[RMDB]
RNA sequence: GGGAACGACUCGAGUAGAGUCGAAAAACUCCUAUUCCAACACGUCCUCGUCGUACAGAGUGGUAACAUCUGUCACCACAUAUCCAAGCUUGGGUACACGGGCUUGACCCAACCCCUUGGGCGGAUGAAAACCAGAUUACGUUCGCGUAAUCUGGAAGUACUUGAGCAAGUUCGCUUGCUCAAGUACAAAAGAAACAACAACAACAAC
Reactivity to 2A3 in 0.01 (KOAc 150mM, MgCl2 10mM, bicine 150mM(pH8.5), 24C), signal-to-noise 2, nucleotides 027 to 156: a000c080u150c010c000u070a080u100u010c050c000a060a020c060a020c120g020u040c010c050u050c020g100u040c010g000u110a030c030a020g100a010g110u020g060g010u080a060a040c010a170u090c020u100g050u050c020a020c040c000a060c040a090u180a010u040c020c000a030a080g010c010u010u050g010g000g000u020a010c040a000c070g000g020g040c000u160u280g140a300c050c000c020a010a050c010c010c000c020u000u000g010g000g000c080g000g030a040u140g020a020a060a030a030c000c000a000g000a020u010u000a000c000g000u020u010c160g000c000g100u000a000a000u000c000u000g000g000a000a030
Structure probing data (2A3) for a 207-nucleotide construct.
For 2A3 the reverse transcriptase was SuperScript II with manganese.
Conditions: 150 mM KOAc, 10 mM MgCl2 and 150 mM bicine (pH 8.5), 24 C.
Source: RMDB library M2RFPK, as collected in RNAgym.